[RMDB]
RNA sequence: GGGAACGACUCGAGUAGAGUCGAAAACAUCAGUCGUUCGCGACUGAUGAAACGUGCAAGCGCUCCACGAAAAAGUCGAUCGAAUACCGAUCGACAAGCGCUAAAGAUAGGCCUUCGGGCCUAUCAAGCCUAUAGGUACGUUCGCGUACCUAUAGGCAAAAGAAACAACAACAACAAC
Reactivity to 2A3 in 0.01 (KOAc 150mM, MgCl2 10mM, bicine 150mM(pH8.5), 24C), signal-to-noise 2, nucleotides 027 to 126: c000a000u010c000a000g000u010c000g030u050u090c220g000c010g110a010c000u000g010a000u000g000a010a020a000c020g000u020g020c060a100a040g000c020g010c000u040c060c030a020c070g190a190a070a020a030a020g000u000c000g000a010u000c000g010a050a040u160a300c140c010g000a010u000c000g000a000c000a000a000g000c010g000c000u000a000a000a070g010a000u000a000g000g020c000c000u020u050c260g060g010g000c000c000u020a000u000c000a000a000
Reactivity to DMS in 0.01 (KOAc 150mM, MgCl2 10mM, bicine 150mM(pH8.5), 24C), signal-to-noise 3, nucleotides 027 to 126: c010a000u000c000a000g020u000c010g010u000u000c210g030c000g020a000c000u000g000a000u000g000a020a050a190c020g010u000g010c070a180a070g010c000g010c010u000c300c010a000c010g000a050a120a100a090a090g020u010c000g010a000u000c000g010a130a180u000a130c220c020g010a000u000c000g000a000c000a010a030g000c040g010c000u010a050a070a190g000a010u000a000g000g000c000c000u000u020c180g040g000g030c000c000u000a010u000c000a070a110